[RMDB]
An RNA of 207 nucleotides, treated with 2A3 and read out base by base. Conditions: 150 mM KOAc, 10 mM MgCl2 and 150 mM bicine (pH 8.5), 24 C. For 2A3 the reverse transcriptase was SuperScript II with manganese. For 2A3, 530 sequencing reads were counted.
RNA sequence: GGGAACGACUCGAGUAGAGUCGAAAAGGAGCUCGGGAUGCACUAAAUCCUAGGAAGUGCAUCCGUACGCUCUUCCUUACCACCAGAGCGUAUUGAAGUGUUGGUGGUUUUGAGACACUUCAGUGAGGGCUCAAAAGGACAUUGCUCUUACCGAGCACCAUUUUACCCGGUUCGCCGGGUAAAAUGGAAAAGAAACAACAACAACAAC
Reactivity to 2A3 in 0.01 (KOAc 150mM, MgCl2 10mM, bicine 150mM(pH8.5), 24C), signal-to-noise 1, nucleotides 027 to 156: g120g000a000g000c010u050c110g200g000g000a000u000g000c000a000c000u080a150a190a000u100c040c000u230a090g080g070a130a010g000u000g000c000a000u040c000c000g000u010a010c060g000c030u000c020u000u040c000c000u010u040a070c000c080a020c000c060a000g000a000g040c010g040u010a010u040u050g080a030a030g000u000g000u060u020g000g130u070g000g000u080u000u130u090g040a060g010a000c000a000c000u000u050c000a040g000u020g100a110g000g120g000c000u010c000a040a110a000a040g010g000a080c030a150u060u130g000c000u000c000u040u130a190c020c050g010a000g000c000a000